[RMDB]
RNA sequence: GGGAACGACUCGAGUAGAGUCGAAAAGACACAAUAUGAUACCCCGGAUUAUUUAGGUAUAUAGACACUAUUUCACAGUUUGAGAGGCUUUCAACAUACCUGAUAUCUUCUCGGCGCUAAAGCGCGAGGAUUCGGAAUAAUAUGCGGACUGUGUACCGGGAAUGUAUCACUUCGGUGAUACAUUCCCAAAAGAAACAACAACAACAAC
Reactivity to 2A3 in 0.01 (KOAc 150mM, MgCl2 10mM, bicine 150mM(pH8.5), 24C), signal-to-noise 2, nucleotides 027 to 156: g070a020c050a000c000a110a110u110a070u300g030a060u200a190c050c000c010c030g040g000a150u130u100a020u050u110u200a000g040g000u070a060u010a000u030a020g070a080c100a000c140u020a040u110u300u160c030a080c100a070g050u060u060u160g140a080g020a050g190g000c000u000u120u300c060a010a010c000a020u020a030c000c020u000g030a070u010a100u140c130u260u010c000u000c030g220g070c010g060c060u270a300a100a070g000c000g000c040g020a030g000g000a000u030u040c040g080g040a010a000u130a130a030u040a040u130g170c040g020g060a000c000u020g000u010g070u030a040c050c050

The record gives the reactivity of an RNA of 207 nucleotides to 2A3.
2A3 adducts were read by reverse transcription with SuperScript II with manganese.